[RMDB]
RNA sequence: GGGAACGACUCGAGUAGAGUCGAAAAAUCAGAGCUGUUGGAGGGACUAAGAAGAAUAGUCAGCAUGCUAUUUGGGUCAUAGGAAACAACUAUCCUUACUUGGAUGCCAGAGGACUCUGCAAGAAAAGUCUAUCGGCGAUUUCGAUCGCCGAUAGACAAAAGAAACAACAACAACAAC
Reactivity to DMS in 0.01 (KOAc 150mM, MgCl2 10mM, bicine 150mM(pH8.5), 24C), signal-to-noise 1, nucleotides 027 to 126: a080u010c030a040g000a040g040c030u000g010u000u010g000g000a290g040g000g000a180c000u030a030a060g010a080a020g000a000a030u040a000g000u010c090a110g060c090a190u090g010c060u000a030u000u010u000g000g000g000u000c110a080u000a130g000g010a070a100a090c180a080a040c090u000a040u060c060c000u000u030a060c120u010u000g000g000a180u010g010c030c040a030g010a130g040g000a110c030u000c000u000g000c150a040a190g000a070a060a090a050
Reactivity to 2A3 in 0.01 (KOAc 150mM, MgCl2 10mM, bicine 150mM(pH8.5), 24C), signal-to-noise 1, nucleotides 027 to 126: a010u010c010a000g050a020g010c070u090g020u300u200g050g030a080g050g000g000a080c060u000a070a090g040a090a000g000a000a100u010a000g020u010c040a000g030c060a070u250g020c010u060a150u170u070u120g140g000g010u150c080a100u030a000g120g000a030a270a080c030a000a020c030u000a000u070c010c000u000u000a180c000u020u000g060g000a100u110g040c000c040a060g020a000g140g050a040c000u050c000u030g000c070a050a000g070a010a060a020a000
Structure probing data (DMS and 2A3) for a 177-nucleotide construct. It was measured as part of the RMDB library OK1LIB. Reactivities are given for positions 27 through 126. Values are in units of 0.01, from 0 to 300, in steps of 10. Conditions: 150 mM KOAc, 10 mM MgCl2 and 150 mM bicine (pH 8.5), 24 C. For 2A3 the reverse transcriptase was SuperScript II with manganese. For DMS the reverse transcriptase was MarathonRT.